Structure probing data (DMS and 2A3) for a 207-nucleotide construct.
The 2A3 profile rests on 1,205 reads.
For 2A3 the reverse transcriptase was SuperScript II with manganese.
Conditions: 150 mM KOAc, 10 mM MgCl2 and 150 mM bicine (pH 8.5), 24 C.
Source: RMDB library OK3TST, as collected in RNAgym.

RNA sequence: GGGAACGACUCGAGUAGAGUCGAAAAGAAUUCUUUCAGCACCGAUUGGGAAGCGCUAAUUGAUCAUGCAUUUUCUUAUGAUUCAAACGAAGGUGUCCUAGCGUGGGAUUACAGCAAAUACGAUGUUCGAAUGAGUUCUCAGGUGGUGAUUGCGGUAACUAUGCGAGGUAUUCGUACCUCGCAUAGUAAAAGAAACAACAACAACAAC
Reactivity to DMS in 0.01 (KOAc 150mM, MgCl2 10mM, bicine 150mM(pH8.5), 24C), signal-to-noise 1, nucleotides 027 to 156: g000a130a100u000u000c020u020u000u030c150a070g010c030a020c040c010g020a290u020u010g040g030g040a040a220g020c050g010c020u020a040a170u000u040g010a060u010c050a040u000g040c080a090u000u010u000u000c060u010u000a110u020g010a130u020u010c030a070a070a150c070g000a050a120g020g000u000g000u000c020c030u000a100g040c050g050u000g030g020g020a070u000u010a070c110a060g000c080a040a060a160u010a070c030g030a010u010g050u000u010c030g020a070a070u000g000a010g060u000u000c010u000c010a110g030g020u000g030g020u000g000a170u010u000g010c000g030g040u000a050
Reactivity to 2A3 in 0.01 (KOAc 150mM, MgCl2 10mM, bicine 150mM(pH8.5), 24C), signal-to-noise 2, nucleotides 027 to 156: g020a000a050u080u070c020u020u070u030c020a030g000c020a010c010c030g190a190u070u160g020g020g050a040a060g080c030g020c090u090a140a080u060u100g040a040u110c070a020u090g090c010a040u050u100u160u050c030u040u170a090u180g090a110u100u160c100a070a060a040c040g040a040a040g120g030u050g040u030c000c000u060a070g010c020g050u080g000g000g040a020u010u120a080c050a050g080c000a040a040a010u130a110c100g060a080u050g040u090u040c070g030a070a130u060g020a030g050u050u000c040u010c050a020g050g050u030g000g050u040g040a110u020u090g020c020g000g020u000a010